[RMDB]
The record gives the reactivity of an RNA of 177 nucleotides to 2A3 and DMS. For DMS the reverse transcriptase was MarathonRT. The DMS profile rests on 12,490 reads. The RNA was probed in 150 mM KOAc, 10 mM MgCl2 and 150 mM bicine (pH 8.5) at 24 C.
RNA sequence: GGGAACGACUCGAGUAGAGUCGAAAAGAUAUGGACCCGAAAGCAGCGAGGAACUCGGAAACGAGUUCUCCCCACCGAACUACUGCUGAGGGUCCUAAGUCAAAAGCUAAUCCUUCGGGAUUAGCAAGGAAUGUUAGUAGUUCGCUACUAACAUUCCAAAAGAAACAACAACAACAAC
Reactivity to 2A3 in 0.01 (KOAc 150mM, MgCl2 10mM, bicine 150mM(pH8.5), 24C), signal-to-noise 2, nucleotides 027 to 126: g010a000u040a020u080g000g000a010c000c000c010g010a070a050a000g010c020a010g110c040g190a060g020g040a020a010c000u000c010g010g000a030a020a010c000g010a010g000u030u000c020u050c010c010c020c010a150c050c100g090a160a080c100u260a040c000u300g000c000u000g000a070g000g020g000u000c000c010u000a010a000g010u000c000a000a000a000a120g000c000u010a010a000u000c010c000u020u080c300g090g000g000a000u010u010a000g010c000a010a000
Reactivity to DMS in 0.01 (KOAc 150mM, MgCl2 10mM, bicine 150mM(pH8.5), 24C), signal-to-noise 9, nucleotides 027 to 126: g010a020u000a140u010g000g010a010c010c000c000g000a120a070a010g020c000a010g000c220g010a090g010g000a010a010c000u000c000g000g000a030a040a080c010g010a020g010u000u000c030u000c030c030c090c130a200c190c130g010a080a080c130u010a300c010u000g000c000u000g000a300g000g000g000u000c000c000u000a000a050g000u010c020a080a070a110a070g000c000u000a000a010u000c000c000u000u020c220g030g010g010a010u000u000a000g000c000a030a040